[RMDB]
RNA sequence: GGGAACGACUCGAGUAGAGUCGAAAAGAUAUGGACAGUCCAGUGCAAGAGCACAGAUCGGAAACGAUCUGUCGCUUGAUGACCACUGGAGCUGUCCUAAGUCAAAACAUGCGGUUCGCCGCAUGAAGUUGGGAACUACGUUCGCGUAGUUCCCAACAAAAGAAACAACAACAACAAC
Reactivity to 2A3 in 0.01 (KOAc 150mM, MgCl2 10mM, bicine 150mM(pH8.5), 24C), signal-to-noise 1, nucleotides 027 to 126: g010a000u030a010u100g000g000a000c010a020g000u000c000c000a000g000u020g010c120a300a300g010a000g110c000a000c000a000g000a010u000c020g000g050a020a000a000c010g000a000u010c010u000g010u060c070g000c010u020u030g120a080u200g150a140c070c020a020c050u040g020g000a030g100c000u010g000u000c000c010u010a000a010g000u000c030a060a000a050a090c010a000u000g020c000g000g120u010u100c300g050c120c000g080c000a000u010g000a010a000
Reactivity to DMS in 0.01 (KOAc 150mM, MgCl2 10mM, bicine 150mM(pH8.5), 24C), signal-to-noise 2, nucleotides 027 to 126: g030a020u000a300u020g000g000a000c010a000g010u000c000c000a020g000u000g000c090a090a090g010a030g020c000a050c010a000g000a000u000c000g010g020a090a050a220c020g010a000u000c000u000g020u010c300g040c010u020u010g000a090u010g010a120c300c000a020c010u000g000g000a040g030c030u010g010u000c010c000u000a000a080g000u020c040a070a040a080a150c000a120u000g010c000g000g010u000u010c170g000c000c000g030c000a000u000g000a030a070
Source: RMDB library TTRDES, as collected in RNAgym.
This 177-nucleotide RNA was probed chemically with 2A3 and DMS.
For DMS, 1,262 sequencing reads were counted.